[RMDB]
RNA sequence: GGGAACGACUCGAGUAGAGUCGAAAAUAUGCACAAGAGGGUGUUUGUAUUACCACAAAUGGCUCGUGGGCCAUUUUUAAUGACCACCAUCUUAAUAGACCUGGUGUCUAUUGUGGCUCUGAUUUUACAACCUACAAUACUUCGGUAUUGUAGGUUGAAAAGAAACAACAACAACAAC
Reactivity to 2A3 in 0.01 (KOAc 150mM, MgCl2 10mM, bicine 150mM(pH8.5), 24C), signal-to-noise 2, nucleotides 027 to 126: u090a050u060g020c010a020c030a100a000g030a070g080g100g020u020g010u010u120u090g040u080a090u030u090a010c010c010a010c050a110a010a020u000g040g000c000u000c070g030u200g070g000g000c000c020a020u000u000u000u040u060a060a040u080g030a010c000c000a000c000c010a020u010c030u080u160a110a100u040a050g010a010c010c040u070g200g010u140g020u050c010u020a050u020u050g010u010g030g000c020u020c040u040g090a060u040u020u000u020a070
Reactivity to DMS in 0.01 (KOAc 150mM, MgCl2 10mM, bicine 150mM(pH8.5), 24C), signal-to-noise 5, nucleotides 027 to 126: u020a060u010g010c050a080c090a070a050g000a030g000g020g010u000g010u000u000u010g010u000a060u000u010a110c220c130a130c190a020a020a010u000g000g020c010u000c100g030u010g020g010g000c000c020a010u000u000u010u000u010a040a100u000g000a040c100c010a020c010c050a040u000c040u000u000a060a050u000a030g000a020c010c030u010g000g020u010g010u010c000u000a020u000u010g010u000g010g020c050u000c090u010g000a140u010u000u010u000a150